[RMDB]
RNA sequence: GGGAACGACUCGAGUAGAGUCGAAAAGCCGGGCAAGCCAGUCCCGCGGGGCGAAUUGGUCUCGGAACUUAACCCUAAGUAUACCUUUGGUUCUGAAAAGUCUUGCGCUCCUAUAGUCGUUCGGACCGUAUAAGCAUGAGUUCGCUCAUGCUUAUACAAAAGAAACAACAACAACAAC
Reactivity to 2A3 in 0.01 (KOAc 150mM, MgCl2 10mM, bicine 150mM(pH8.5), 24C), signal-to-noise 1, nucleotides 027 to 126: g000c040c000g020g050g010c050a100a050g110c040c050a040g020u060c010c000c020g000c090g020g000g000g000c000g080a100a100u090u080g070g050u060c010u050c000g000g000a020a020c000u030u110a100a100c020c010c020u000a040a020g010u020a100u050a220c020c020u030u040u140g000g000u090u000c010u030g030a060a070a070a030g040u070c030u020u090g020c030g000c000u000c000c000u030a070u040a150g020u000c000g020u020u000c010g050g090a050c030c030
Reactivity to DMS in 0.01 (KOAc 150mM, MgCl2 10mM, bicine 150mM(pH8.5), 24C), signal-to-noise 2, nucleotides 027 to 126: g000c060c050g010g020g010c240a070a100g010c050c070a080g020u010c000c030c030g010c150g010g020g010g000c040g010a070a110u010u010g010g010u000c050u000c000g000g010a060a040c030u000u000a070a120c030c030c050u040a090a140g010u000a110u010a050c100c040u000u000u000g000g010u000u000c020u000g000a030a140a080a120g000u000c010u000u000g020c050g020c030u000c020c050u000a100u010a070g010u000c030g010u010u010c040g010g000a120c140c110